[RMDB]
RNA sequence: GGGAACGACUCGAGUAGAGUCGAAAAGAUAUGGAUAUUGCGAUUUCAUCAUCGAUCUCGGAAACGAGGGAGAUGGUCGAACUACAAUAUCCUAAGUCAAACGUGACGUUCUUCGGAACGUCACGAAGGUUCUAUCCAGGUUCGCCUGGAUAGAACCAAAAGAAACAACAACAACAAC
Reactivity to DMS in 0.01 (KOAc 150mM, MgCl2 10mM, bicine 150mM(pH8.5), 24C), signal-to-noise 2, nucleotides 027 to 126: g020a050u000a300u000g000g000a010u000a010u000u010g020c080g010a050u000u000u000c180a030u010c010a000u010c010g000a300u020c000u000c000g000g030a100a040a150c010g000a000g040g000g000a300g000a010u000g010g040u040c180g000a000a000c050u040a050c010a020a000u000a000u000c000c000u020a020a110g000u000c070a050a060a200c010g010u020g030a010c020g020u000u010c000u010u010c240g010g000a000a000c000g000u000c000a000c000g000a040a050
Reactivity to 2A3 in 0.01 (KOAc 150mM, MgCl2 10mM, bicine 150mM(pH8.5), 24C), signal-to-noise 1, nucleotides 027 to 126: g020a030u040a020u100g010g020a010u000a000u020u040g100c240g100a060u050u010u030c030a010u020c000a000u000c000g020a030u020c000u000c020g060g020a130a070a040c030g010a010g020g000g000a030g000a020u000g010g000u010c100g000a010a020c000u030a010c020a000a010u000a000u000c000c000u010a130a020g070u040c030a070a050a080c020g000u000g010a010c010g010u020u010c000u030u040c160g170g010a000a000c000g000u030c000a000c000g000a020a020